[RMDB]
About this RNA
Chemical mapping of a 207-nucleotide RNA with 2A3 and DMS. Source: RMDB library OK3TST, as collected in RNAgym. For DMS, 5,821 sequencing reads were counted. Conditions: 150 mM KOAc, 10 mM MgCl2 and 150 mM bicine (pH 8.5), 24 C.
RNA sequence: GGGAACGACUCGAGUAGAGUCGAAAAGCAUCUCUAGAUCACAUGGAAGGAAAGUUUUGGGUCCAAUGUGAUAAUUUGGAGGAUUGCGGUGUAACUGAUGGGAUCGAGUACGAUUCGCCUGAUGAGGCUGUUCGUAGGUGGAAUCGCCGAGCAUGACGUUUAUAGAGAGCUUCGGCUCUCUAUAAACAAAAGAAACAACAACAACAAC
Reactivity to 2A3 in 0.01 (KOAc 150mM, MgCl2 10mM, bicine 150mM(pH8.5), 24C), signal-to-noise 4, nucleotides 027 to 156: g010c010a060u020c010u000c020u050a040g000a120u000c000a010c000a030u020g050g030a040a060g060g090a140a100a110g090u170u140u210u180g160g030g010u050c000c020a050a120u020g010u000g020a000u050a110a080u100u070u090g040g020a010g030g020a040u030u100g020c040g010g000u040g030u060a060a060c050u050g080a060u090g030g000g030a040u060c030g020a040g050u040a070c010g000a020u010u050c000g030c000c010u100g060a110u120g030a020g070g110c100u110g080u110u040c030g000u030a000g010g010u040g090g000a030a010u020c010g000c010c020g030a030g010c030a030u090g030a040c100
Reactivity to DMS in 0.01 (KOAc 150mM, MgCl2 10mM, bicine 150mM(pH8.5), 24C), signal-to-noise 2, nucleotides 027 to 156: g040c050a100u010c010u000c020u010a070g060a060u000c030a020c020a040u000g000g020a080a080g000g000a110a120a180g010u000u000u000u000g020g040g020u000c080c010a120a020u010g020u000g010a040u000a030a080u000u010u000g020g010a080g040g010a140u000u000g030c060g000g030u000g000u010a070a160c060u000g000a100u010g020g000g010a130u010c040g010a150g040u010a060c060g000a060u000u010c050g030c010c000u000g010a110u000g010a110g040g040c090u000g040u000u000c050g010u010a050g010g000u000g050g020a050a050u000c040g020c010c000g010a100g020c020a090u000g010a150c150

Values cover nucleotides 27 to 156.